[RMDB]
RNA sequence: GGGAACGACUCGAGUAGAGUCGAAAAGUUCUUUUUUCACCAUAGAAUAUUGGGUUCUGUUUAGGGAGAAGAUAAAGCUGGUUGAAGACAACGACACCUUUGAUACAACCGUCGCUUGUUUUUGACCCACGGUUCGAGUAUUCGUACUCGAACCGUGAAAAGAAACAACAACAACAAC
Reactivity to DMS in 0.01 (KOAc 150mM, MgCl2 10mM, bicine 150mM(pH8.5), 24C), signal-to-noise 2, nucleotides 027 to 126: g050u030u000c000u000u000u000u000u000u000c000a060c090c220a080u030a020g000a030a080u000a100u010u020g110g030g000u000u030c010u010g000u000u020u000a190g000g010g000a040g000a090a020g000a020u000a040a120a040g030c120u010g030g000u000u000g050a010a010g000a040c020a020a040c030g000a020c010a160c100c070u040u000u080g000a200u010a080c270a080a050c180c130g010u000c020g010c200u000u010g010u000u000u000u000u000g000a040c020c060
Reactivity to 2A3 in 0.01 (KOAc 150mM, MgCl2 10mM, bicine 150mM(pH8.5), 24C), signal-to-noise 3, nucleotides 027 to 126: g060u080u000c010u070u050u050u010u020u030c040a060c030c020a040u100a020g020a000a040u220a110u240u230g230g020g000u000u000c020u020g190u050u090u140a020g000g040g000a040g000a050a000g000a030u150a150a030a040g090c060u030g030g010u000u000g010a000a010g000a000c000a050a030c020g000a000c000a070c020c010u110u140u290g130a130u150a100c100a030a070c090c070g010u020c010g050c180u000u040g000u000u000u000u000u000g000a000c000c000
Structure probing data (DMS and 2A3) for a 177-nucleotide construct. The reactions ran in a buffer of 150 mM KOAc, 10 mM MgCl2 and 150 mM bicine (pH 8.5), at 24 C. For 2A3, 1,067 sequencing reads were counted. For DMS the reverse transcriptase was MarathonRT.